Source information: Chemical mapping of a 207-nucleotide RNA with 2A3. The RNA was probed in 150 mM KOAc, 10 mM MgCl2 and 150 mM bicine (pH 8.5) at 24 C. The 2A3 profile rests on 636 reads. Reactivities are given for positions 27 through 156. 2A3 adducts were read by reverse transcription with SuperScript II with manganese.
[RMDB]
RNA sequence: GGGAACGACUCGAGUAGAGUCGAAAACUUAUCCGGUUUUAACGCUGUUUUAUUGGCGCAAAGGUUUACGGAUAAACAACUAAUAAUUAAACCUUUUGUGUGCGAAACUUGGUUGUUUAACGUACUCACUGCCCCCAGGGAUUCGUCCCUGGGGGAAGAUAGUCGUCUUCUUCGGAAGACGACUAUCAAAAGAAACAACAACAACAAC
Reactivity to 2A3 in 0.01 (KOAc 150mM, MgCl2 10mM, bicine 150mM(pH8.5), 24C), signal-to-noise 2, nucleotides 027 to 156: c040u000u000a000u000c000c000g010g010u020u010u010u020a030a010c000g000c010u070g220u140u130u230u220a160u180u300g010g000c000g010c050a040a000a000g010g010u010u020u000a000c010g000g000a020u050a000a080a020c020a030a010c100u210a040a200u160a170a010u170u180a010a020a010c000c000u000u050u150u190g020u000g000u000g020c000g020a050a030a220c070u040u030g100g000u030u000g030u000u020u020a010a000c020g060u050a000c020u010c090a130c090u160g000c010c000c000c000c020a000g010g000g000a010u040u050c110g040u010c060c000c000u010g000g000g020g000g000a000a000